[RMDB]
RNA sequence: GGGAACGACUCGAGUAGAGUCGAAAAUGCAAGUUUUGUUCGAAAACUAUCAGCAGCGACAUGUGCACCGGCACGCGCGGCAUCACGUGCGACGCUGAUACGCUCAGAUGUCGUCAUCACGUGUAAGAUUCGUCGUUAGGACGGGGAUAUCUGCACGCUAAUCGAUGUAAUUCGUUACAUCGAUUAGAAAAGAAACAACAACAACAAC
Reactivity to 2A3 in 0.01 (KOAc 150mM, MgCl2 10mM, bicine 150mM(pH8.5), 24C), signal-to-noise 9, nucleotides 027 to 156: u120g000c060a060a060g040u030u030u070u060g180u120u130c100g110a050a040a050a060c050u070a060u160c050a060g030c010a000g020c010g050a060c070a030u050g010u020g010c050a050c080c000g150g000c070a050c080g050c020g000c000g030g000c040a140u150c060a050c040g000u010g000c010g030a050c060g000c010u000g010a040u030a110c080g010c040u020c030a070g010a170u090g020u020c020g050u030c030a090u110c030a050c020g000u010g010u030a100a050g000a020u030u050c050g130u010c020g090u300u230a150g070g160a010c000g000g000g020g020a010u040a010u090c000u010g000c010a000c030g000
Reactivity to DMS in 0.01 (KOAc 150mM, MgCl2 10mM, bicine 150mM(pH8.5), 24C), signal-to-noise 4, nucleotides 027 to 156: u010g030c020a120a080g020u000u010u000u000g030u000u000c070g020a090a020a040a080c040u000a080u010c040a110g010c040a120g020c030g000a110c020a060u010g030u000g080c300a090c020c020g030g020c020a210c100g020c090g000c020g000g010c080a120u000c070a060c050g050u000g010c030g000a140c070g020c000u000g000a050u000a080c070g020c050u000c060a130g020a070u000g020u000c010g000u010c060a110u010c060a130c050g040u010g020u010a070a080g020a110u010u000c040g030u000c010g010u000u010a160g020g020a080c020g000g000g020g010a100u010a050u000c030u000g000c030a040c040g020

Structure probing data (2A3 and DMS) for a 207-nucleotide construct. It was measured as part of the RMDB library OK3TST.